[RMDB]
RNA sequence: GGGAACGACUCGAGUAGAGUCGAAAAGGGUGUAUCCCCACUUAUCAAGAUGAAGAAAAAGGCUUUUUAUGCCCAUGCCAUGGGGGGCGUUUCACGGCUGAUGGCGUGAAUAUUGCCGGCACUCCCCCUUAUGUGCUUUAUUCGUAAAGCACAUAAGAAAAGAAACAACAACAACAAC
Reactivity to 2A3 in 0.01 (KOAc 150mM, MgCl2 10mM, bicine 150mM(pH8.5), 24C), signal-to-noise 8, nucleotides 027 to 126: g030g020g000u030g020u160a260u220c020c010c030c000a030c030u180u200a160u170c070a080a080g050a300u190g090a060a130g060a100a100a020a010a020g040g000c040u200u150u060u070u120a070u280g000c000c010c000a040u080g030c020c030a060u060g000g010g000g000g020g000c000g000u020u010u010c020a020c020g130g000c070u170g130a180u250g100g070c010g000u010g000a000a000u110a050u040u200g010c000c000g000g000c010a010c000u030c010c000c010c010
Reactivity to DMS in 0.01 (KOAc 150mM, MgCl2 10mM, bicine 150mM(pH8.5), 24C), signal-to-noise 9, nucleotides 027 to 126: g010g000g010u000g020u000a100u010c010c000c010c050a120c110u000u010a090u000c120a100a100g010a120u010g010a110a090g010a040a070a080a140a120g000g000c030u000u010u010u010u000a050u030g010c010c010c040a120u000g010c110c080a090u000g010g010g000g010g010g010c020g010u000u000u000c010a030c010g010g000c020u010g010a150u010g020g000c010g010u000g000a020a030u010a030u010u010g040c010c010g010g010c030a050c050u000c000c000c000c050
The data come from the RNA Mapping Database (RMDB), library OK2TST. Chemical mapping of a 177-nucleotide RNA with 2A3 and DMS. The DMS profile rests on 20,614 reads. DMS adducts were read by reverse transcription with MarathonRT.